Chemical mapping of a 207-nucleotide RNA with DMS and 2A3. The reactions ran in a buffer of 150 mM KOAc, 10 mM MgCl2 and 150 mM bicine (pH 8.5), at 24 C. As a SHAPE reagent, 2A3 marks flexible, mostly unpaired nucleotides at the ribose 2'-OH.
[RMDB]
RNA sequence: GGGAACGACUCGAGUAGAGUCGAAAAGGGAGGCAAAGGUUGCAGUGAGCUGAGAUCACGCCAUUGCACUCUAGCCUGGGUGAUAGAGCGAGAUUCCGUCUCAAUGAAAAGAAAUACGUUGGCAGAUAUUUUCUUCCAUCAUUUUGAAAAUAUCCCAGUAGGAUUCUACAUUCGUGUAGAAUCCUACAAAAGAAACAACAACAACAAC
Reactivity to DMS in 0.01 (KOAc 150mM, MgCl2 10mM, bicine 150mM(pH8.5), 24C), signal-to-noise 1, nucleotides 027 to 156: g030g000g020a080g030g030c050a150a060a050g000g000u000u000g010c000a050g020u000g000a150g060c020u000g010a220g010a140u010c110a110c050g020c020c020a010u010u000g020c000a010c020u000c020u000a280g020c030c010u010g020g000g000u000g000a090u010a040g000a060g000c060g010a110g000a080u000u000c060c040g000u020c000u000c050a080a080u010g000a090a100a060a120g000a070a050a080u000a070c090g020u000u000g000g000c100a090g000a090u000a020u000u000u000u010c020u000u000c090c100a060u030c050a170u010u000u000u010g000a070a070a020a090u010a050u000c020c000c020a300
Reactivity to 2A3 in 0.01 (KOAc 150mM, MgCl2 10mM, bicine 150mM(pH8.5), 24C), signal-to-noise 3, nucleotides 027 to 156: g060g010g010a030g000g010c040a070a110a000g030g010u070u070g030c020a000g000u020g050a110g020c020u020g050a050g010a250u180c050a020c150g000c010c010a010u010u020g000c010a010c010u030c000u010a020g010c020c000u020g010g010g010u060g040a110u090a110g050a020g030c050g010a010g030a090u120u040c080c010g070u040c010u000c050a060a080u120g030a020a070a040a090g060a010a080a030u120a040c070g050u080u110g060g000c060a010g020a020u010a080u010u100u010u010c030u080u020c100c030a080u090c020a060u170u170u080u100g020a040a030a010a040u050a020u030c000c010c040a010